[RMDB]
Chemical mapping of a 177-nucleotide RNA with 2A3 and DMS.
For 2A3 the reverse transcriptase was SuperScript II with manganese.
Values cover nucleotides 27 to 126.

RNA sequence: GGGAACGACUCGAGUAGAGUCGAAAACAGCACUUUGGGAAGCCAAAGCUGGCGGAUCACGAGGUCAGGAGAUCGAGACCAGCCUGGCCAACAUGGUGAAACCCCAUCUCUACUAAAGAUACAAAAAGACUGAGUUAUUGUUCGCAAUAACUCAGUCAAAAGAAACAACAACAACAAC
Reactivity to 2A3 in 0.01 (KOAc 150mM, MgCl2 10mM, bicine 150mM(pH8.5), 24C), signal-to-noise 2, nucleotides 027 to 126: c010a000g070c010a030c040u040u000u040g000g030g030a050a030g000c000c020a040a040a030g000c030u000g060g000c010g060g030a010u000c000a000c120g060a070g180g220u180c070a040g060g130a220g010a070u050c030g000a050g100a280c020c000a000g020c000c000u000g000g000c030c010a040a030c000a000u000g040g010u000g010a050a070a080c040c000c000c000a070u040c040u050c040u080a210c010u080a130a110a010g080a080u240a110c120a050a090a010a000a100
Reactivity to DMS in 0.01 (KOAc 150mM, MgCl2 10mM, bicine 150mM(pH8.5), 24C), signal-to-noise 1, nucleotides 027 to 126: c070a070g020c010a100c060u010u000u000g000g000g000a120a100g010c010c000a000a060a100g000c060u020g010g000c050g000g030a030u000c020a050c090g020a070g000g010u010c090a030g000g000a050g040a010u000c060g010a040g000a050c000c000a010g000c000c010u000g000g000c010c010a040a080c080a010u000g000g010u000g010a010a030a030c010c000c000c000a080u000c010u000c010u000a030c070u000a050a010a020g000a040u000a010c130a020a060a050a120a040